[RMDB]
RNA sequence: GGGAACGACUCGAGUAGAGUCGAAAAAGUUAUGAGUUCGCUCAUAACUACAGCGAAAGGCGCUCGGACCCGCAGUCCGCCGAAGGCUUCCCAGCCUGUCCAAGUUGGUAUAUUUCGAUAUACCAAAAUUUUUAAACUGAUUCGUCAGUUUAAAAAUAAAAGAAACAACAACAACAAC
Reactivity to 2A3 in 0.01 (KOAc 150mM, MgCl2 10mM, bicine 150mM(pH8.5), 24C), signal-to-noise 2, nucleotides 027 to 126: a000g000u020u010a010u020g000a000g020u030u100c140g090c080u010c010a020u000a010a000c000u010a040c030a010g050c020g110a120a070a090g080g000c020g000c070u080c060g010g050a080c040c000c030g060c050a010g020u030c020c030g010c000c020g020a020a000g100g000c000u020u040c000c000c000a010g010c000c010u060g020u040c040c020a110a080g090u010u040g020g020u010a000u000a010u020u080u100c100g010a010u000a000u000a000c000c000a050a020a020
Reactivity to DMS in 0.01 (KOAc 150mM, MgCl2 10mM, bicine 150mM(pH8.5), 24C), signal-to-noise 8, nucleotides 027 to 126: a050g010u000u000a000u000g010a010g010u000u010c240g010c000u000c000a010u000a000a000c000u000a050c110a300g010c030g010a040a060a080g000g000c030g020c050u010c080g000g000a080c040c300c050g000c070a070g010u000c080c010g010c040c030g010a120a070g010g000c090u000u000c020c010c010a260g000c080c050u000g000u010c060c090a140a120g010u000u000g000g000u000a000u000a010u000u000u010c140g010a020u000a000u000a000c000c000a010a010a030

Conditions: 150 mM KOAc, 10 mM MgCl2 and 150 mM bicine (pH 8.5), 24 C. Structure probing data (2A3 and DMS) for a 177-nucleotide construct. For 2A3, 2,230 sequencing reads were counted. Source: RMDB library M2PK50, as collected in RNAgym.